RNA sequence: GGGAACGACUCGAGUAGAGUCGAAAAGAAAGGCAGCCACUGCAGCCCACGCAGCCAGUCGACGCAUGCUUUUGCAUGCCGCCCACGACUGAGGGCAGCUGCGGCACUGAGGGCAGCUGCCGAAAGAACUAUAAUGCAGGUUCGCCUGCAUUAUAGUAAAAGAAACAACAACAACAAC
Reactivity to DMS in 0.01 (KOAc 150mM, MgCl2 10mM, bicine 150mM(pH8.5), 24C), signal-to-noise 9, nucleotides 027 to 126: g010a090a110a130g000g020c020a020g010c030c090a160c070u010g020c080a060g000c070c050c040a170c070g010c010a020g010c020c010a040g010u000c020g000a170c140g000c000a010u000g010c000u000u000u000u010g010c000a010u000g010c040c120g020c080c030c130a300c040g000a020c020u000g010a130g010g010g020c110a120g000c010u000g010c000g000g010c230a110c120u010g000a060g010g000g010c060a090g000c000u010g000c010c000g010a020a060a080g010a130
Reactivity to 2A3 in 0.01 (KOAc 150mM, MgCl2 10mM, bicine 150mM(pH8.5), 24C), signal-to-noise 4, nucleotides 027 to 126: g090a040a090a010g020g000c020a010g010c030c050a110c100u140g050c060a040g010c010c000c000a020c020g020c000a000g030c020c010a020g020u020c020g030a040c050g000c000a010u020g000c010u160u260u270u300g000c010a000u010g000c010c030g030c000c020c000a080c020g060a010c020u050g030a130g050g120g000c020a010g000c010u000g000c000g000g010c070a060c150u150g050a170g000g030g000c010a010g000c010u000g000c000c000g000a010a010a000g010a000
Source: RMDB library OK2TRN, as collected in RNAgym. Chemical mapping of a 177-nucleotide RNA with DMS and 2A3. 2A3 is a SHAPE reagent: it acylates the 2'-hydroxyl of flexible nucleotides of all four kinds. Conditions: 150 mM KOAc, 10 mM MgCl2 and 150 mM bicine (pH 8.5), 24 C.